[RMDB]
RNA sequence: GGGAACGACUCGAGUAGAGUCGAAAAUGACGGUGAUACUAUCUUAUCCGACGAAGAACUGGGACGAGAAGUCCCCGCCGCAUUAAAGUGUCGAAGGUCUCCCGUGUUGGAGCCUUUCAAGGUCAGGAGAUUAUCUGGGAUUCGUCCCAGAUAAUCUAAAAGAAACAACAACAACAAC
Reactivity to DMS in 0.01 (KOAc 150mM, MgCl2 10mM, bicine 150mM(pH8.5), 24C), signal-to-noise 6, nucleotides 027 to 126: u000g000a110c010g010g010u010g000a160u010a070c130u000a130u010c050u000u000a090u010c070c040g010a070c100g000a080a080g000a090a140c210u010g010g000g010a020c010g000a130g020a140a190g000u000c020c020c000c020g010c010c010g000c070a040u000u000a050a090a090g010u000g010u010c090g000a020a020g000g010u000c020u000c000c000c100g010u000g010u000u000g010g010a040g000c030c000u000u000u000c070a090a100g020g010u010c060a080g000g000
Reactivity to 2A3 in 0.01 (KOAc 150mM, MgCl2 10mM, bicine 150mM(pH8.5), 24C), signal-to-noise 4, nucleotides 027 to 126: u060g070a060c000g000g000u020g020a050u060a280c060u070a140u120c010u050u070a070u100c050c030g050a050c130g040a090a060g020a090a070c110u090g020g010g000a010c000g020a040g080a300a020g030u000c000c000c000c000g030c010c000g000c000a020u040u110a110a090a090g100u090g090u130c070g000a010a010g000g040u040c000u010c020c010c010g190u130g040u160u160g000g000a010g000c010c000u030u080u060c070a030a020g060g000u060c050a050g060g080
Description
The data come from the RNA Mapping Database (RMDB), library OK2TRN. An RNA of 177 nucleotides, treated with DMS and 2A3 and read out base by base. The RNA was probed in 150 mM KOAc, 10 mM MgCl2 and 150 mM bicine (pH 8.5) at 24 C. The DMS profile rests on 6,732 reads.